[RMDB]
Structure probing data (DMS and 2A3) for a 177-nucleotide construct.
The 2A3 profile rests on 3,497 reads.
2A3 adducts were read by reverse transcription with SuperScript II with manganese.
RNA sequence: GGGAACGACUCGAGUAGAGUCGAAAAGCAGUCGACGCGUCGCUAUCAGGGCGUUGAGUAGCAUGUGCAUCUUGCUAGCCUGGAUCUGGAGUGUCGGCACUCCGAUUGCCGUGUUCAUGAAGGCCUCGACGAUUAGCACUUUCGAGUGCUAAUCGUCAAAAGAAACAACAACAACAAC
Reactivity to DMS in 0.01 (KOAc 150mM, MgCl2 10mM, bicine 150mM(pH8.5), 24C), signal-to-noise 2, nucleotides 027 to 126: g000c070a080g000u000c010g000a030c020g000c030g020u000c000g000c040u020a090u000c070a100g020g010g000c070g020u030u040g010a100g020u000a020g010c000a040u020g000u010g020c180a120u000c020u000u010g010c000u010a090g000c000c010u000g000g000a090u030c120u000g000g010a110g000u010g040u050c090g000g020c040a080c000u020c000c080g000a040u050u000g000c040c040g020u000g020u000u050c020a110u080g000a140a130g020g000c010c070u040c270
Reactivity to 2A3 in 0.01 (KOAc 150mM, MgCl2 10mM, bicine 150mM(pH8.5), 24C), signal-to-noise 5, nucleotides 027 to 126: g110c040a000g040u050c020g030a040c060g030c040g060u090c000g000c110u050a070u140c050a060g020g040g010c070g050u080u110g050a050g040u060a030g010c030a020u040g100u120g140c050a080u090c070u050u050g000c020u010a040g000c000c010u020g050g010a070u010c070u100g000g010a020g030u010g030u070c000g040g000c020a000c000u010c010c020g080a080u030u170g010c010c020g030u060g090u070u060c080a110u180g110a090a030g000g000c000c010u100c070